[RMDB]
Structure probing data (2A3) for a 207-nucleotide construct. 2A3 is a SHAPE reagent: it acylates the 2'-hydroxyl of flexible nucleotides of all four kinds. The data come from the RNA Mapping Database (RMDB), library OK3TST. The RNA was probed in 150 mM KOAc, 10 mM MgCl2 and 150 mM bicine (pH 8.5) at 24 C. Values cover nucleotides 27 to 156.
RNA sequence: GGGAACGACUCGAGUAGAGUCGAAAAUCAAUCGAGUGUCCGACGUGUCGCAUGGAACAGGACGACGACCCGAUGGUGGUAUUUCGUCGUAACAUCGAGGAGAAUAUGCGUCUCAAGUACCGUGACGCAAUCAGGUCCCUCGAGGCUGAAGUGGCCCGUACAAUGGCGAUUUCGAUCGCCAUUGUACAAAAGAAACAACAACAACAAC
Reactivity to 2A3 in 0.01 (KOAc 150mM, MgCl2 10mM, bicine 150mM(pH8.5), 24C), signal-to-noise 2, nucleotides 027 to 156: u100c020a020a030u040c020g010a030g080u060g010u050c000c000g000a050c060g060u060g010u150c080g000c060a050u130g010g060a020a030c020a050g040g100a000c010g010a010c000g020a030c010c000c040g060a130u150g040g210u150g000g060u070a190u030u220u140c070g030u020c010g040u130a050a060c020a040u000c010g010a130g060g050a160g040a050a100u300a100u200g010c010g010u000c010u050c020a130a060g080u060a120c020c110g010u010g020a080c000g000c000a000a000u100c040a010g100g090u000c020c000c000u000c000g000a010g040g070c050u110g000a070a000g040u090g100g000c000c000c000